[RMDB]
Conditions: 150 mM KOAc, 10 mM MgCl2 and 150 mM bicine (pH 8.5), 24 C. This 177-nucleotide RNA was probed chemically with DMS and 2A3.
RNA sequence: GGGAACGACUCGAGUAGAGUCGAAAAGUUGUUGGAACACACCUGUCUUCGUGAUCCGGAAGGCUUCCGGGUCUUACCGCUUACUGCAUGAUUUGCGCGCUGUUAACGCCAAGCUUGUUCCUUUUGGCCUUAGGACCUGGUUCGCCAGGUCCUAAGGAAAAGAAACAACAACAACAAC
Reactivity to DMS in 0.01 (KOAc 150mM, MgCl2 10mM, bicine 150mM(pH8.5), 24C), signal-to-noise 1, nucleotides 027 to 126: g030u060u000g000u000u000g000g000a020a070c100a050c180a090c070c070u000g000u000c120u000u000c120g060u000g000a040u000c010c000g020g040a050a230g020g060c140u000u000c010c020g000g020g050u000c000u000u000a120c060c070g080c080u000u040a080c060u000g000c000a020u010g000a100u000u000u060g000c060g020c110g040c000u000g030u030u030a000a190c110g090c000c040a060a040g010c060u020u050g030u000u000c000c000u000u000u000u000g000g010
Reactivity to 2A3 in 0.01 (KOAc 150mM, MgCl2 10mM, bicine 150mM(pH8.5), 24C), signal-to-noise 1, nucleotides 027 to 126: g000u020u000g000u030u030g090g010a110a030c110a000c000a010c130c000u040g090u130c050u100u070c020g070u020g010a020u000c000c000g020g020a010a010g300g010c000u050u000c040c000g000g000g070u000c000u000u000a020c000c000g070c090u010u060a070c000u160g050c000a080u120g130a300u060u040u110g040c030g010c000g000c040u020g060u090u110a060a000c010g040c000c000a050a000g070c130u030u000g020u010u040c080c150u000u040u000u050g240g040
For 2A3, 473 sequencing reads were counted. DMS adducts were read by reverse transcription with MarathonRT. Source: RMDB library RFM100, as collected in RNAgym.